Overview
Chemical mapping of a 177-nucleotide RNA with DMS and 2A3. The reactions ran in a buffer of 150 mM KOAc, 10 mM MgCl2 and 150 mM bicine (pH 8.5), at 24 C.
RNA sequence: GGGAACGACUCGAGUAGAGUCGAAAAUGUAGCGAACCCACGCGCAAGCGUUGCUACGAGGCGAUGGAGACAAAAGCAGUUACGUUCGCAACUCUCUGAGGGUUCCUGAUGCUUCCUUGGAUGUCCGUAAUCAAUGCGAAUUCGUUCGCAUUGAUUAAAAAGAAACAACAACAACAAC
Reactivity to DMS in 0.01 (KOAc 150mM, MgCl2 10mM, bicine 150mM(pH8.5), 24C), signal-to-noise 7, nucleotides 027 to 126: u030g010u000a030g000c010g010a100a110c050c040c050a180c050g010c010g010c190a100a110g000c030g010u020u010g000c060u010a030c050g000a100g010g010c030g010a090u010g000g000a100g000a090c180a040a060a090a100g020c090a100g010u010u010a080c100g000u010u010c080g010c110a090a060c040u000c020u000c020u010g000a070g000g000g000u000u000c010c020u000g000a080u010g000c020u010u000c020c030u000u000g010g010a080u010g000u000c020c070g000
Reactivity to 2A3 in 0.01 (KOAc 150mM, MgCl2 10mM, bicine 150mM(pH8.5), 24C), signal-to-noise 7, nucleotides 027 to 126: u120g000u010a000g020c030g020a060a090c010c010c010a020c010g020c000g010c050a070a040g030c020g110u120u160g000c020u080a050c050g030a090g040g000c030g030a110u080g030g030a100g030a130c080a070a130a030a030g050c050a010g020u090u090a040c070g020u030u030c020g010c050a030a090c010u010c000u010c020u030g020a020g030g020g000u020u010c000c000u080g030a090u100g020c000u050u030c010c000u050u060g080g000a080u070g070u040c030c020g030

Source: RMDB libraries RFM100 and RFMREP, as collected in RNAgym.